[RMDB]
RNA sequence: GGGAACGACUCGAGUAGAGUCGAAAAACUAAUUACAGGGUAGGCGACAAUGAUAGUCACGAGAACAGCUAAACACAAGUAUGUCAUGGACUCCGUUGCGCAAUCGUCGUGAUCGUGCCGGUUGCAAAAUGGAUCAAUUGUUCGCAAUUGAUCCAUUAAAAGAAACAACAACAACAAC
Reactivity to 2A3 in 0.01 (KOAc 150mM, MgCl2 10mM, bicine 150mM(pH8.5), 24C), signal-to-noise 4, nucleotides 027 to 126: a000c030u050a040a050u170u110a050c060a050g080g040g030u080a020g090g010c010g020a040c040a060a070u100g070a050u060a030g050u060c010a010c090g100a080g020a100a010c030a020g050c070u180a090a140a000c030a000c020a110a040g050u060a210u140g030u030c050a070u100g030g000a020c010u000c020c010g020u060u060g010c040g000c030a010a050u060c000g070u000c000g030u080g090a080u090c040g020u030g010c010c000g020g020u030u030g020c000a000a090
Reactivity to DMS in 0.01 (KOAc 150mM, MgCl2 10mM, bicine 150mM(pH8.5), 24C), signal-to-noise 5, nucleotides 027 to 126: a080c080u000a050a050u020u040a090c070a080g010g010g020u010a040g010g010c040g000a100c120a070a050u010g000a070u020a040g000u020c020a070c020g000a060g020a050a060c060a060g000c030u020a090a060a060c160a060c190a090a070g000u010a040u010g000u000c040a100u020g000g000a040c040u000c060c040g000u010u010g020c120g000c040a020a030u020c050g010u010c090g010u010g010a070u010c140g000u010g000c040c040g010g010u000u010g030c060a030a050
The record gives the reactivity of an RNA of 177 nucleotides to 2A3 and DMS. For DMS the reverse transcriptase was MarathonRT. Values cover nucleotides 27 to 126. As a SHAPE reagent, 2A3 marks flexible, mostly unpaired nucleotides at the ribose 2'-OH. Source: RMDB library OK1LIB, as collected in RNAgym. The RNA was probed in 150 mM KOAc, 10 mM MgCl2 and 150 mM bicine (pH 8.5) at 24 C.